[RMDB]
Overview: Chemical mapping of a 177-nucleotide RNA with 2A3 and DMS. The reactions ran in a buffer of 150 mM KOAc, 10 mM MgCl2 and 150 mM bicine (pH 8.5), at 24 C. For DMS the reverse transcriptase was MarathonRT. For DMS, 2,798 sequencing reads were counted.
RNA sequence: GGGAACGACUCGAGUAGAGUCGAAAAAGAGUGAUUUAACUCAACAGCUUGACACCUUCAUUAAUUUUACAACACGAAGCCUGGGUGCUCUCUGCUUCCUCUUUAACAGUGCAGGGAAAUUAGAGGAGUAUCGAUUGAGAUUCGUCUCAAUCGAUACAAAAGAAACAACAACAACAAC
Reactivity to 2A3 in 0.01 (KOAc 150mM, MgCl2 10mM, bicine 150mM(pH8.5), 24C), signal-to-noise 4, nucleotides 027 to 126: a000g080a030g020u060g100a170u120u160u180a070a030c010u030c020a040a030c010a020g060c020u040u050g030a020c010a030c050c000u030u030c060a070u040u190a140a130u080u110u120u140a100c080a180a020c030a030c100g060a070a010g030c000c030u080g010g050g040u070g030c000u030c020u000c010u020g030c040u080u050c000c000u040c030u020u090u060a070a060c040a030g040u020g130c020a020g040g000g030a030a070a030u090u020a050g030a030g090g000a050
Reactivity to DMS in 0.01 (KOAc 150mM, MgCl2 10mM, bicine 150mM(pH8.5), 24C), signal-to-noise 3, nucleotides 027 to 126: a070g000a030g010u000g000a150u010u010u010a070a080c030u010c010a110a110c130a110g000c040u010u000g000a080c090a070c020c020u000u000c090a090u010u010a030a050u010u020u000u010a080c090a070a070c100a070c100g000a060a060g000c040c040u000g000g020g000u000g000c060u010c040u010c030u000g010c060u000u010c020c010u000c050u000u000u000a070a050c110a060g030u010g010c020a040g000g000g000a030a050a040u000u010a040g000a060g010g020a250